RNA sequence: GGGAACGACUCGAGUAGAGUCGAAAAGAUAUGGACAUUCAGCGCUCGAGGAUCUUACUCGGAAACGAGUAAGGGAGAGCCUGACUGUGUCCUAAGUCAAACUGGUGCAAACUUCGGUUUGCACCAGCACCCAGUGCAACUUCGGUUGCACUGGGUGAAAAGAAACAACAACAACAAC
Reactivity to 2A3 in 0.01 (KOAc 150mM, MgCl2 10mM, bicine 150mM(pH8.5), 24C), signal-to-noise 1, nucleotides 027 to 126: g030a000u030a010u070g020g000a010c020a020u070u000c010a020g020c030g000c300u010c030g170a300g000g030a000u000c000u000u000a010c000u010c000g030g000a040a030a030c000g000a010g050u010a010a000g000g010g000a000g010a000g020c030c000u000g000a000c030u100g040u040g000u070c000c000u000a050a000g010u030c070a180a000a210c010u030g030g000u020g000c000a010a000a010c030u050u130c300g140g000u010u000u000g030c000a000c000c010a000g010
Reactivity to DMS in 0.01 (KOAc 150mM, MgCl2 10mM, bicine 150mM(pH8.5), 24C), signal-to-noise 2, nucleotides 027 to 126: g000a010u010a110u040g010g000a010c000a080u000u000c000a010g010c300g060c000u010c000g010a110g030g000a050u030c010u000u000a010c000u010c000g010g000a010a030a050c000g000a020g000u000a000a010g000g000g000a020g020a000g020c000c000u000g000a000c300u020g010u000g020u000c000c000u000a020a100g000u010c040a110a110a300c000u010g000g010u000g000c010a000a000a000c000u000u000c240g020g000u000u010u000g000c000a000c000c000a000g010